[RMDB]
RNA sequence: GGGAACGACUCGAGUAGAGUCGAAAACACACAAGGUUCGCCUUGUGUGCAAGAAUAGACGAAUACUACCGUAGAAGUAUUCAGGUCACAUAACUACGGAUAUGGCGUUCUGCUUCGGCAGAACGAAUAUAAGAUAAGGUUUCGACCUUAUCUUAUAAAAAGAAACAACAACAACAAC
Reactivity to DMS in 0.01 (KOAc 150mM, MgCl2 10mM, bicine 150mM(pH8.5), 24C), signal-to-noise 9, nucleotides 027 to 126: c010a010c000a000c000a010a000g000g020u000u010c230g030c000c000u000u000g000u000g020u000g010c050a090a090g010a130a120u010a100g010a110c080g000a020a010u000a010c010u000a120c010c010g000u000a010g010a200a030g010u000a010u000u000c010a070g010g010u000c090a080c130a070u010a090a100c010u010a010c010g000g010a300u010a060u000g010g000c000g010u000u000c000u000g010c000u000u010c170g020g010c000a000g000a000a000c000g000a030a040
Reactivity to 2A3 in 0.01 (KOAc 150mM, MgCl2 10mM, bicine 150mM(pH8.5), 24C), signal-to-noise 9, nucleotides 027 to 126: c010a000c000a000c010a010a000g030g010u040u060c140g130c040c000u000u000g000u000g000u000g000c010a030a030g090a080a090u150a140g080a040c050g010a010a000u010a020c010u070a280c000c010g010u020a010g020a130a000g010u010a010u010u010c020a010g120g080u100c070a050c030a240u200a220a080c020u010a000c020g030g040a050u050a140u160g210g010c000g000u000u000c000u000g000c000u020u040c160g100g000c000a000g000a000a000c000g000a000a000
Notes
The data come from the RNA Mapping Database (RMDB), library M2PK50. Chemical mapping of a 177-nucleotide RNA with DMS and 2A3. The RNA was probed in 150 mM KOAc, 10 mM MgCl2 and 150 mM bicine (pH 8.5) at 24 C. For 2A3 the reverse transcriptase was SuperScript II with manganese. Reactivities are given for positions 27 through 126.